The record gives the reactivity of an RNA of 177 nucleotides to 2A3 and DMS. For 2A3 the reverse transcriptase was SuperScript II with manganese.
RNA sequence: GGGAACGACUCGAGUAGAGUCGAAAAGAUAUGGAUCCCUGGUAACUUCGAGGAUCUUUCUCGGAAACGAGAAAGGGAGAAGACCACAUGGGAUCCUAAGUCAAAGGGGUAACUUCGGUUACCCCAAGAUUAAAUAAGCGUUCGCGCUUAUUUAAUCAAAAGAAACAACAACAACAAC
Reactivity to 2A3 in 0.01 (KOAc 150mM, MgCl2 10mM, bicine 150mM(pH8.5), 24C), signal-to-noise 3, nucleotides 027 to 126: g000a010u070a010u100g000g000a000u010c000c020c040u040g050g080u130a300a290c040u020u000c020g080a300g000g040a010u030c000u000u000u000c030u010c000g000g020a070a050a030c010g000a000g000a030a010a010g010g000g000a040g010a010a010g100a080c010c020a100c080a220u160g010g020g000a010u000c000c000u010a060a000g020u020c050a080a110a130g040g000g000g000u010a020a010c030u050u110c300g110g000u040u000a000c000c000c000c000a000a010
Reactivity to DMS in 0.01 (KOAc 150mM, MgCl2 10mM, bicine 150mM(pH8.5), 24C), signal-to-noise 3, nucleotides 027 to 126: g020a030u000a300u010g000g000a020u000c000c000c000u000g010g010u000a120a130c060u010u010c000g010a110g020g000a030u010c000u000u000u000c000u000c000g010g000a080a080a210c000g000a000g000a000a000a000g000g000g010a020g020a020a020g000a100c030c040a070c300a110u000g010g020g010a010u000c000c000u000a020a080g000u000c030a080a140a200g000g010g010g010u000a000a000c000u000u010c240g040g010u000u000a000c000c000c010c000a010a000
For 2A3, 4,586 sequencing reads were counted. It was measured as part of the RMDB library TTRDES.